[RMDB]
RNA sequence: GGGAACGACUCGAGUAGAGUCGAAAACCCAGACCGUUCGCGGUCUGGGAAAACCGCAAUAAACAUGGGCCCAUGAGCCGAACCGGAAGGGCGUCCGCCCAAAAACUUGUGUCUUCGGACACAAGAACAACAUAUGAAGCUUCGGCUUCAUAUGUUGAAAAGAAACAACAACAACAAC
Reactivity to 2A3 in 0.01 (KOAc 150mM, MgCl2 10mM, bicine 150mM(pH8.5), 24C), signal-to-noise 2, nucleotides 027 to 126: c010c000c010a000g000a000c010c010g030u080u090c200g010c010g110g010u000c010u020g020g020g000a070a090a000a000c030c010g000c090a090a180u180a140a120a040c090a100u090g000g000g030c000c020c040a070u130g020a010g100c030c040g030a070a060c050c060g050g060a070a050g080g010g000c000g070u000c070c100g050c010c000c030a000a070a000a020a050c000u010u000g000u010g000u000c010u020u070c250g090g000a000c000a000c000a010a000g000a010a030
Reactivity to DMS in 0.01 (KOAc 150mM, MgCl2 10mM, bicine 150mM(pH8.5), 24C), signal-to-noise 2, nucleotides 027 to 126: c020c000c010a030g000a000c000c000g070u000u030c150g030c000g030g000u000c010u000g020g000g000a010a030a070a190c040c030g030c240a090a080u000a020a080a110c070a080u010g000g000g000c020c050c030a040u020g010a120g020c020c020g000a050a100c080c090g010g010a100a140g000g000g010c030g030u000c060c090g000c010c010c010a010a090a080a090a100c000u000u000g010u000g000u000c000u000u000c150g000g000a000c000a000c000a000a000g000a070a170